RNA sequence: GGGAACGACUCGAGUAGAGUCGAAAACGAAGGCUUUAGCUAUAAACCUCACGCAUUCGCGCUGGGCUUUGUUGAAGCGCCACGCGGUGAAGACGUGCACUGGAGCAUGCUCGGUGAUAACCAAAAAACUAAAUCAGCUUUUCGAAGCUGAUUUAGUAAAAGAAACAACAACAACAAC
Reactivity to 2A3 in 0.01 (KOAc 150mM, MgCl2 10mM, bicine 150mM(pH8.5), 24C), signal-to-noise 5, nucleotides 027 to 126: c020g030a060a010g060g010c020u090u140u150a030g000c020u040a020u190a280a160a060c000c020u030c010a010c020g000c010a050u120u170c020g000c010g030c100u030g000g000g000c000u080u070u110g230u100u270g100a020a000g020c080g090c040c000a020c060g000c010g040g000u060g020a040a020g050a030c020g010u020g000c030a010c080u070g070g020a010g010c030a060u100g010c030u030c030g040g000u050g030a070u130a080a090c010c000a070a060a010a000a010
Reactivity to DMS in 0.01 (KOAc 150mM, MgCl2 10mM, bicine 150mM(pH8.5), 24C), signal-to-noise 6, nucleotides 027 to 126: c090g010a130a100g010g010c080u010u000u010a060g020c070u010a110u000a070a080a120c080c050u000c060a030c060g010c210a100u000u010c040g010c000g010c150u000g000g000g000c020u000u000u010g010u000u010g010a040a020g000c010g010c030c000a040c100g010c010g000g020u010g020a050a050g010a090c050g010u000g000c160a060c050u010g010g010a030g030c050a090u010g000c060u000c030g010g010u010g000a110u010a060a160c030c090a000a040a040a090a090
Conditions: 150 mM KOAc, 10 mM MgCl2 and 150 mM bicine (pH 8.5), 24 C. This 177-nucleotide RNA was probed chemically with 2A3 and DMS. The DMS profile rests on 6,651 reads. Values cover nucleotides 27 to 126.